[RMDB]
RNA sequence: GGGAACGACUCGAGUAGAGUCGAAAAAUAAAGGAGGUCAGGGUCAGGAGCCCCCCCGUGAACCCAGGAUAACCCUCAAAGUCGGGGGGCAACCCGCGACCGUUAGAGGACUGGUAAAAAUAAUGAACAUCAUGAUUGAGUUCGCUCAAUCAUGAUGAAAAGAAACAACAACAACAAC
Reactivity to DMS in 0.01 (KOAc 150mM, MgCl2 10mM, bicine 150mM(pH8.5), 24C), signal-to-noise 1, nucleotides 027 to 126: a130u000a040a040a160g020g030a200g030g000u000c060a090g000g030g020u000c020a120g010g000a130g000c130c000c010c010c010c010c030g050u020g000a040a090c140c040c040a080g000g000a170u000a080a210c140c000c010u000c020a000a190a190g000u010c020g000g000g020g030g060g000c110a050a070c000c030c000g000c100g000a020c000c010g000u000u020a080g020a050g020g000a080c040u000g010g000u040a050a080a070a060a070u030a060a090u010g020a120a130